[RMDB]
RNA sequence: GGGAACGACUCGAGUAGAGUCGAAAAAAACGUGUUCGGAUACCGCUGUAGAGAUAAGAGACUGUAGCUCUAUGGCCACCAAGAGCACGGAUAACAAAAACAAUGUAUUCUUCGAUGAGCCUGCCUGUUACGUCGUAGGUUUCGACCUACGACGUAAAAAAGAAACAACAACAACAAC
Reactivity to 2A3 in 0.01 (KOAc 150mM, MgCl2 10mM, bicine 150mM(pH8.5), 24C), signal-to-noise 2, nucleotides 027 to 126: a000a010a000c030g000u010g000u000u000c010g030g000a070u030a180c000c000g020c000u040g000u000a000g030a000g040a050u040a100a120g140a000g040a110c030u190g110u240a030g000c000u000c000u000a000u000g050g010c000c040a010c020c020a050a100g010a000g030c010a000c000g000g000a040u040a040a060c090a020a050a120a000a040c060a190a040u170g050u050a210u110u010c000u030u030c040g090a060u040g110a020g010c000c000u000g000c000c000u020g010
Reactivity to DMS in 0.01 (KOAc 150mM, MgCl2 10mM, bicine 150mM(pH8.5), 24C), signal-to-noise 1, nucleotides 027 to 126: a160a030a000c000g040u050g010u000u000c020g000g030a130u030a030c200c200g000c000u000g020u000a000g000a010g000a120u000a050a090g030a180g000a070c220u020g000u010a110g020c020u000c000u000a000u000g010g000c020c180a060c110c080a100a100g040a010g000c000a020c000g000g000a080u000a110a040c090a020a020a100a010a090c140a110a020u020g000u000a070u020u000c010u000u000c030g000a020u010g000a040g000c020c050u020g030c010c040u030g010